[RMDB]
RNA sequence: GGGAACGACUCGAGUAGAGUCGAAAACUACAUAGCAAGCCUUUGUUUCCGCUUGUUAAUCGGAAUAUCCAUCCGGUUUUUAUAUCCGGAUUUUCAUAAUUAUAUAUGGAAGACACUUGCCAUAAAACAAAAUACGUAUGUUCGCAUACGUAUUUUGAAAAGAAACAACAACAACAAC
Reactivity to 2A3 in 0.01 (KOAc 150mM, MgCl2 10mM, bicine 150mM(pH8.5), 24C), signal-to-noise 1, nucleotides 027 to 126: c010u060a010c000a080u110a050g000c000a000a020g000c010c000u060u160u120g020u010u060u030c000c030g010c020u040u020g090u090u090a020a040u090c060g000g000a230a080u070a150u300c110c000a030u010c010c000g000g130u040u080u050u080u220a250u080a040u100c020c000g020g000a050u110u000u000u020c010a010u050a300a010u300u240a120u100a030u000a010u300g030g000a020a010g090a030c050a000c150u040u140g050c020c000a140u100a080a060a000a040
Reactivity to DMS in 0.01 (KOAc 150mM, MgCl2 10mM, bicine 150mM(pH8.5), 24C), signal-to-noise 2, nucleotides 027 to 126: c020u000a110c160a110u000a050g010c010a030a030g010c080c070u010u020u010g000u000u000u000c020c160g010c060u010u000g020u010u010a050a130u000c040g000g010a130a080u000a060u000c160c180a070u000c000c000g000g010u010u020u020u020u020a070u010a020u070c020c000g010g000a010u000u000u010u000c000a010u010a020a140u000u010a200u010a190u000a000u020g010g000a000a050g000a130c150a050c110u000u000g000c030c050a090u000a040a070a100a120